[RMDB]
Description
An RNA of 207 nucleotides, treated with 2A3 and DMS and read out base by base. For 2A3, 5,492 sequencing reads were counted. Conditions: 150 mM KOAc, 10 mM MgCl2 and 150 mM bicine (pH 8.5), 24 C. For DMS, 11,373 sequencing reads were counted.
RNA sequence: GGGAACGACUCGAGUAGAGUCGAAAAGAAUCACCGUACCUAUUUAGGUUUACGCUCCAAGAUCGGUGGAUAGCAGCCCUAUCAAUAUCUAGGAGAACUGUGCUAUGUUUAGAAGAUUAGGUCGUCUAUUACACAGCCAUGUUCGCAUGGCUGUGAAACGAUAAUAUACUUUCGAGUAUAUUAUCGUAAAAGAAACAACAACAACAAC
Reactivity to 2A3 in 0.01 (KOAc 150mM, MgCl2 10mM, bicine 150mM(pH8.5), 24C), signal-to-noise 7, nucleotides 027 to 156: g070a040a090u130c010a010c020c010g020u040a020c010c000u080a160u250u210u300a040g000g000u020u070u060a020c030g000c020u020c000c000a030a020g010a030u040c020g030g060u040g040g040a020u070a030g100c110a030g020c010c010c000u050a070u140c060a080a050u030a010u150c020u030a020g000g020a030g030a050a040c060u090g010u030g080c030u060a020u130g060u040u080u020a110g010a150a020g020a110u110u140a050g080g020u040c040g000u000c040u030a080u070u100a070c020a000c000a000g000c000c000a000u010g020u050u030c080g000c090a010u000g000g000c000u000g000u000g010a000a000
Reactivity to DMS in 0.01 (KOAc 150mM, MgCl2 10mM, bicine 150mM(pH8.5), 24C), signal-to-noise 4, nucleotides 027 to 156: g010a130a120u010c000a130c020c010g010u010a050c020c000u000a230u010u000u010a030g020g020u000u000u000a080c060g010c000u010c030c030a100a060g020a040u010c050g020g030u000g000g000a080u000a100g010c070a190g000c080c100c000u000a140u000c020a060a120u000a070u000c060u010a120g020g000a080g010a060a070c070u010g010u000g010c030u000a080u000g020u000u000u000a070g000a040a070g000a060u000u010a090g030g020u000c020g010u000c020u000a090u000u000a160c020a010c000a010g000c000c000a020u000g000u000u000c250g020c030a030u010g000g010c000u010g010u000g000a020a080